This 177-nucleotide RNA was probed chemically with 2A3 and DMS. Values cover nucleotides 27 to 126. DMS adducts were read by reverse transcription with MarathonRT. Values are in units of 0.01, from 0 to 300, in steps of 10. The 2A3 profile rests on 1,865 reads. The RNA was probed in 150 mM KOAc, 10 mM MgCl2 and 150 mM bicine (pH 8.5) at 24 C.
RNA sequence: GGGAACGACUCGAGUAGAGUCGAAAAGCGUUUAGCUUCGGCUAAACGCAAAUAAGCUGACCAGCUAAGAGGUCAUACAUCGUCAUAGCACAAAGAAAGAGAAAACACCUCUGUUCGCAGAGGUGAACCCUAUCAUUCGGUUCGCCGAAUGAUAGGGAAAAGAAACAACAACAACAAC
Reactivity to 2A3 in 0.01 (KOAc 150mM, MgCl2 10mM, bicine 150mM(pH8.5), 24C), signal-to-noise 2, nucleotides 027 to 126: g010c000g020u000u010u010a000g000c000u050u020c190g070g010c010u020a000a000a000c000g000c010a000a000a000u000a010a010g080c020u010g000a010c040c010a010g000c020u050a080a000g050a020g060g020u030c030a050u160a100c060a100u100c100g110u000c010a070u060a030g030c060a000c060a070a070a030g150a090a120a020g130a020g010a050a050a030a010c000a000c010c000u000c000u000g010u030u060c210g010c070a000g010a000g010g000u000g000a000a010
Reactivity to DMS in 0.01 (KOAc 150mM, MgCl2 10mM, bicine 150mM(pH8.5), 24C), signal-to-noise 2, nucleotides 027 to 126: g000c000g000u010u000u000a000g010c000u000u010c230g040g020c000u000a020a000a020c000g040c000a000a040a050u010a070a080g010c150u000g000a100c050c030a200g000c040u000a070a130g010a030g000g000u010c010a050u000a100c210a090u000c190g000u000c060a060u000a090g000c000a220c140a070a110a020g000a110a110a040g010a150g010a060a060a060a080c010a000c000c000u000c000u000g010u030u010c140g030c010a010g040a010g000g010u000g010a030a060